[RMDB]
RNA sequence: GGGAACGACUCGAGUAGAGUCGAAAAGCAUUACGCGGCCGCGAUUAAUGCAUGCGCAUGCGCAUCGGCCGUAGCUAGCUAGCGCUAGCCGCGCGUACGUAUAAUUAAUAUCGUACGGCUAUAUAGCCCACAACCUUUGGUUCGCCAAAGGUUGUGGAAAAGAAACAACAACAACAAC
Reactivity to 2A3 in 0.01 (KOAc 150mM, MgCl2 10mM, bicine 150mM(pH8.5), 24C), signal-to-noise 3, nucleotides 027 to 126: g010c030a040u110u140a050c110g000c010g020g010c050c040g000c030g110a080u120u190a200a030u070g050c060a020u120g060c070g000c060a070u130g000c010g000c010a050u150c070g000g020c000c000g020u020a000g000c000u010a000g010c010u050a020g060c020g020c120u000a010g000c020c020g030c020g000c010g030u010a020c020g090u100a020u040a110a180u290u150a110a090u070a010u130c030g010u010a000c000g030g020c010u020a000u010a010u060a200g060c000
Reactivity to DMS in 0.01 (KOAc 150mM, MgCl2 10mM, bicine 150mM(pH8.5), 24C), signal-to-noise 3, nucleotides 027 to 126: g020c030a080u010u000a080c130g000c070g010g000c060c140g010c110g000a100u000u000a070a030u000g010c080a070u020g010c080g000c020a040u010g010c020g000c090a120u000c120g030g040c030c010g010u000a090g000c010u000a010g000c040u000a100g000c200g010c020u000a020g000c010c090g010c010g000c010g030u010a000c020g020u000a030u010a100a200u010u010a100a120u000a060u010c040g000u010a010c010g020g020c010u000a100u010a090u000a250g000c060
Notes
Structure probing data (2A3 and DMS) for a 177-nucleotide construct. For DMS, 1,970 sequencing reads were counted. For 2A3, 2,326 sequencing reads were counted. For 2A3 the reverse transcriptase was SuperScript II with manganese. Conditions: 150 mM KOAc, 10 mM MgCl2 and 150 mM bicine (pH 8.5), 24 C.